[RMDB]
RNA sequence: GGGAACGACUCGAGUAGAGUCGAAAAUCUUCCGAAGGAUUGGCCCAAGAAUUGAACCAACGCAUGACCCAAGGGCAAAGCGACUUUGUAUUCGUCAUUGGCGGAUCAAACGGCCUGCACAAGGACGACGCAUACUAUCCUUCGGGAUAGUAUGCGUAAAAGAAACAACAACAACAAC
Reactivity to DMS in 0.01 (KOAc 150mM, MgCl2 10mM, bicine 150mM(pH8.5), 24C), signal-to-noise 4, nucleotides 027 to 126: u000c030u000u010c060c080g020a160a060g000g010a060u010u000g000g030c000c030c010a150a130g020a090a090u000u000g000a050a100c050c040a050a120c080g010c060a050u020g000a170c070c000c020a110a130g010g010g060c090a050a120a160g000c060g010a130c150u000u000u020g000u020a100u010u000c040g020u000c000a090u000u010g000g000c050g020g000a000u000c050a020a060a110c170g000g010c030c000u010g020c100a090c130a030a050g010g000a060c040g010
Reactivity to 2A3 in 0.01 (KOAc 150mM, MgCl2 10mM, bicine 150mM(pH8.5), 24C), signal-to-noise 3, nucleotides 027 to 126: u040c010u090u020c060c050g020a050a040g090g020a060u090u130g060g000c000c020c000a030a020g080a070a160u110u130g040a060a070c010c000a020a050c050g020c030a030u170g120a130c000c010c040a070a060g040g020g000c000a040a060a020g030c010g050a030c050u130u020u010g060u100a040u020u050c000g030u000c120a250u040u180g010g000c030g000g050a050u020c000a020a130a030c060g060g000c040c000u050g040c080a060c000a200a010g030g000a010c040g010
Conditions: 150 mM KOAc, 10 mM MgCl2 and 150 mM bicine (pH 8.5), 24 C.
This 177-nucleotide RNA was probed chemically with DMS and 2A3.
DMS adducts were read by reverse transcription with MarathonRT.
For 2A3, 2,429 sequencing reads were counted.
For DMS, 5,280 sequencing reads were counted.